[RMDB]
RNA sequence: GGGAACGACUCGAGUAGAGUCGAAAACACGCCCGCUGGGUAGAUGUAGUCUCAUACUCCAAUGACUUGGGGUCACUGUGUAAAGGUACUACAGAGCUACGACCAUGUGAUAGGCGGGGAGCUGGACCCUCUCACCACCUAGGUAGUGUUGAAGGUCGCACAAUCAAAAGUUCGCUUUUGAUUGUGCAAAAGAAACAACAACAACAAC
Reactivity to DMS in 0.01 (KOAc 150mM, MgCl2 10mM, bicine 150mM(pH8.5), 24C), signal-to-noise 2, nucleotides 027 to 156: c020a120c110g040c000c000c010g040c050u000g000g030g020u000a010g020a170u000g000u000a010g030u000c040u010c000a070u000a020c000u010c010c000a020a030u010g020a050c090u040u010g030g010g030g020u000c010a040c020u000g000u000g040u010a030a300a040g000g050u030a050c010u000a020c010a040g020a110g030c010u000a050c020g000a260c050c050a150u020g000u000g020a140u010a180g000g030c000g050g020g020g000a080g020c060u000g030g010a040c000c000c000u000c020u000c020a020c030c010a040c000c020u000a170g050g030u000a040g020u010g030u030u010g020a050a070g030g010u000c050
Reactivity to 2A3 in 0.01 (KOAc 150mM, MgCl2 10mM, bicine 150mM(pH8.5), 24C), signal-to-noise 2, nucleotides 027 to 156: c020a040c030g110c000c070c010g000c040u070g000g080g000u010a000g000a050u010g000u000a000g000u000c020u010c010a040u140a110c000u000c000c010a050a030u290g220a190c210u030u010g010g000g010g000u000c000a010c020u000g010u010g000u000a030a030a000g180g050u020a020c000u000a000c000a020g060a060g000c010u000a010c020g120a110c020c080a130u200g040u090g160a140u090a080g010g000c000g010g000g020g030a020g020c100u140g040g020a030c000c000c000u030c000u000c010a050c050c010a020c010c020u040a070g160g000u070a040g050u070g010u010u060g050a210a050g030g000u020c040
Structure probing data (DMS and 2A3) for a 207-nucleotide construct. For DMS, 4,051 sequencing reads were counted. 2A3 adducts were read by reverse transcription with SuperScript II with manganese.